[RMDB]
RNA sequence: GGGAACGACUCGAGUAGAGUCGAAAACAGAGGUUCGCCUCUGGAACUGAUAUGGAAUCCUGGUACUCUUGGACCAAUACGUAACAUCGUGUCGGAAACGACACGUGGUAUUGCUAGAGUACGGGAUUCCUAAGUCUUAUAGCAGAUUCGUCUGCAAGACACCAUUGUAAUUCGUUACAAUGGUGUCAAAAGAAACAACAACAACAAC
Reactivity to 2A3 in 0.01 (KOAc 150mM, MgCl2 10mM, bicine 150mM(pH8.5), 24C), signal-to-noise 9, nucleotides 027 to 156: c000a000g010a000g010g030u120u120c220g140c040c000u000c000u010g000g010a040a080c080u050g010a020u030a030u110g000g000a010a000u010c010c020u150g260g050u010a000c000u020c010u080u300g060g030a070c040c010a000a000u000a000c010g030u030a050a030c040a220u230c030g000u010g000u000c000g000g030a040a030a030c000g000a000c000a000c000g000u000g010g000u000a000u000u010g010c010u010a000g000a000g000u000a000c000g000g000g000a000u000u000c000c000u000a000a000g000u000c020u080u230a270u260a140g000c010a000g010a060u070u130c140g120u020c090u010g010c040a020a020
Reactivity to DMS in 0.01 (KOAc 150mM, MgCl2 10mM, bicine 150mM(pH8.5), 24C), signal-to-noise 3, nucleotides 027 to 156: c000a000g000a010g030g010u000u000c260g040c000c000u000c000u010g020g010a030a060c020u000g020a160u000a150u010g010g010a020a020u000c000c010u000g040g060u000a020c010u000c000u000u000g040g010a130c300c010a020a020u000a020c010g000u010a070a080c090a030u000c000g070u000g000u010c000g010g000a120a060a220c010g020a020c000a000c010g020u010g000g010u000a010u000u010g000c010u000a040g000a020g030u010a010c000g000g000g010a010u000u000c000c000u000a000a030g010u010c000u010u000a100u000a190g010c010a040g020a110u000u010c290g020u000c020u010g010c010a100a160
Source information: An RNA of 207 nucleotides, treated with 2A3 and DMS and read out base by base. The reactions ran in a buffer of 150 mM KOAc, 10 mM MgCl2 and 150 mM bicine (pH 8.5), at 24 C. It was measured as part of the RMDB library RNAMAK. As a SHAPE reagent, 2A3 marks flexible, mostly unpaired nucleotides at the ribose 2'-OH.